RNA sequence: GGGAACGACUCGAGUAGAGUCGAAAAUUGGCGAAUGCCUGUGGAUCUACAUUUGUUGCGGGUUCGAGACCCGUCAGAGCCCGGCUCUGUAGCUUAAUGGUAGAGCGGUGUAUUCACAUAAACUUGUAAAAGACACGUGCCUUCGGGCACGUGUCAAGGUAUCUACUUUCUUCGGAAAGUAGAUACCAAAAGAAACAACAACAACAAC
Reactivity to DMS in 0.01 (KOAc 150mM, MgCl2 10mM, bicine 150mM(pH8.5), 24C), signal-to-noise 1, nucleotides 027 to 156: u000u000g010g000c060g000a090a030u000g030c030c060u000g030u010g010g020a040u000c010u010a040c020a070u010u000u000g020u020u000g020c010g030g040g000u000u000c060g030a300g010a110c010c020c010g040u010c060a060g030a040g020c020c030c160g010g000c000u010c030u000g000u000a070g020c110u010u010a050a110u020g020g010u010a060g010a130g020c010g010g040u030g010u000a020u010u000c040a050c000a050u000a090a060a110c060u000u030g030u000a000a100a100a240g010a030c000a040c000g010u000g000c000c010u010u020c300g050g020g090c000a000c000g010u000g010u000c000a010a040
Reactivity to 2A3 in 0.01 (KOAc 150mM, MgCl2 10mM, bicine 150mM(pH8.5), 24C), signal-to-noise 2, nucleotides 027 to 156: u070u040g060g020c050g080a240a070u270g020c010c000u020g000u020g000g000a030u020c040u110a010c010a050u090u070u110g070u050u010g000c020g000g000g010u000u010c010g010a040g010a080c010c000c000g010u000c030a010g000a000g000c070c270c030g110g010c010u010c000u000g070u050a030g010c000u040u070a070a010u240g160g010u080a030g000a010g040c030g000g020u050g000u030a030u010u080c020a000c000a040u200a050a150a090c040u100u070g080u180a010a130a040a070g000a010c000a000c000g000u000g030c000c010u040u080c260g030g000g000c000a000c000g000u000g000u000c000a000a000
This 207-nucleotide RNA was probed chemically with DMS and 2A3. The 2A3 profile rests on 1,138 reads. It was measured as part of the RMDB library M2RFPK. Conditions: 150 mM KOAc, 10 mM MgCl2 and 150 mM bicine (pH 8.5), 24 C.